[RMDB]
RNA sequence: GGGAACGACUCGAGUAGAGUCGAAAAAGAAGUGGCCCCGUUGACGAGUUUAACUUAGAUUAAGUAGGACGCAUGAUCUUGAGCUCUUUUCCUAUACUUUGUCCUAUGGCCAGCUUUCUCCUUAUUAGUGUGGCUCCUAAUUCGUUAGGAGCCACACAAAAGAAACAACAACAACAAC
Reactivity to 2A3 in 0.01 (KOAc 150mM, MgCl2 10mM, bicine 150mM(pH8.5), 24C), signal-to-noise 2, nucleotides 027 to 126: a000g070a000a000g100u100g000g000c000c000c000c000g060u060u140g010a030c040g000a000g000u020u060u060a050a000c030u000u040a040g090a120u200u000a060a000g130u100a090g010g030a010c010g080c150a160u010g100a050u240c000u120u070g070a050g010c000u020c010u140u080u040u020c000c000u000a040u030a010c010u050u040u280g000u000c030c040u010a120u040g000g000c010c000a020g130c010u000u020u000c080u130c000c000u090u200a240u080u100a300